[RMDB]
Chemical mapping of a 177-nucleotide RNA with DMS. For DMS the reverse transcriptase was MarathonRT. The RNA was probed in 150 mM KOAc, 10 mM MgCl2 and 150 mM bicine (pH 8.5) at 24 C. It was measured as part of the RMDB library OK2TRN.

RNA sequence: GGGAACGACUCGAGUAGAGUCGAAAACUCUGUUCCUAUUGGGAUUGUACAGGGUAGGAAGAGCAAGUGAGACUGCUUAUCGGACCAUGCUGAUGGAGGCCCUGGUUAAACAGUGCAAGGCAAUCAAUAAAACGCCAUCUUUCGAGAUGGCGUUUUAAAAAGAAACAACAACAACAAC
Reactivity to DMS in 0.01 (KOAc 150mM, MgCl2 10mM, bicine 150mM(pH8.5), 24C), signal-to-noise 2, nucleotides 027 to 126: c040u010c050u000g020u010u000c000c000u000a140u000u010g000g010g010a130u010u000g020u010a080c040a040g000g000g060u000a140g010g010a090a300g010a040g000c070a050a100g020u020g010a130g000a200c070u010g020c040u000u000a060u000c040g020g000a070c020c020a050u020g010c120u000g000a140u010g010g000a120g010g020c030c000c010u000g010g000u030u000a070a040a070c090a070g040u000g010c070a050a060g010g000c060a050a060u010c130a110a120